[RMDB]
RNA sequence: GGGAACGACUCGAGUAGAGUCGAAAAUGACCGGAGGAGGCAGCUGCCCAAGGGGAUGGACUCAGAAGGCCAAAGUGCUGUUAUCCAAACGAACUCUUUGCAAGUGGUCUCUUUGCAACAGGCCUGGGGGAGAGCAGUCUUGCCUAAAGUCACACCACACUCAUAUGGCGUUCGCGCCAUAUGAGUGAAAAGAAACAACAACAACAAC
Reactivity to 2A3 in 0.01 (KOAc 150mM, MgCl2 10mM, bicine 150mM(pH8.5), 24C), signal-to-noise 1, nucleotides 027 to 156: u180g020a010c030c030g070g090a120g060g070a050g000g020c020a030g000c010u070g000c000c000c020a020a090g000g000g000g020a020u020g030g040a040c000u000c050a110g000a120a080g040g000c030c030a050a070a050g080u070g010c010u030g060u060u070a100u070c030c000a120a190a000c060g110a010a010c010u020c040u180u210u100g020c020a020a130g050u040g150g000u010c060u010c010u090u020u050g070c040a080a140c050a010g010g070c000c000u030g000g030g010g000g000a070g000a020g050c000a010g000u090c010u100u130g000c020c020u080a080a030a000g000u030c010a030c000a010c090c000a020